[RMDB]
RNA sequence: GGGAACGACUCGAGUAGAGUCGAAAACGCUGGGUAAUUUCCCGAAGCUACCCACCGCAUCUGAAGCGCGCACGGAUGCGAGGCAAUGUGGGAUCUUACCUGUGCUGAAGCGCGCACGGCAACCGAAAGGUGCGAGAGAUCAUGUUCGCAUGAUCAACCGGCUGUCCAACUUCGGUUGGACAGCCGGAAAAGAAACAACAACAACAAC
Reactivity to 2A3 in 0.01 (KOAc 150mM, MgCl2 10mM, bicine 150mM(pH8.5), 24C), signal-to-noise 2, nucleotides 027 to 156: c070g010c060u080g000g000g000u060a080a050u030u070u030c000c000c030g030a100a030g060c100u180a170c030c050c040a060c050c030g000c000a020u000c010u050g050a240a050g030c010g000c020g000c010a000c020g000g000a010u000g000c000g010a070g000g000c060a090a160u290g040u300g170g000g010a030u030c010u000u010a000c030c000u080g070u160g000c040u140g060a070a010g000c000g000c000g000c030a000c030g040g000c000a010a040c010c000g030a050a070a020g030g000u040g050c050g000a070g000a010g000a040u000c000a010u000g060u150u050c170g040c140a010u000g000a000u010c000a010a020